[RMDB]
RNA sequence: GGGAACGACUCGAGUAGAGUCGAAAAAUGGGGCUCUCUUGGGCUCUCCCCUCCACGCCUGCGGGAUUCUGAUGGGAAUGACAACGGUCGGUCCAUUUGACUUUAUCAUUACGAUGGUUCUAGUCGUAACGGACACUACCUUCGGGUAGUGUCCGUUAAAAGAAACAACAACAACAAC
Reactivity to 2A3 in 0.01 (KOAc 150mM, MgCl2 10mM, bicine 150mM(pH8.5), 24C), signal-to-noise 1, nucleotides 027 to 126: a000u100g020g020g020g010c030u000c020u100c030u050u160g020g000g050c050u000c000u000c080c000c000c000u010c050c000a090c080g100c090c000u000g000c020g000g080g020a100u040u050c050u060g160a090u090g090g000g030a090a100u060g010a060c010a090a030c170g150g100u070c020g000g000u020c040c000a040u000u000u300g060a000c000u050u050u010a030u160c030a090u000u010a040c080g060a060u020g000g080u010u000c060u070a000g030u000c000g050u020
This 177-nucleotide RNA was probed chemically with 2A3. The reactions ran in a buffer of 150 mM KOAc, 10 mM MgCl2 and 150 mM bicine (pH 8.5), at 24 C.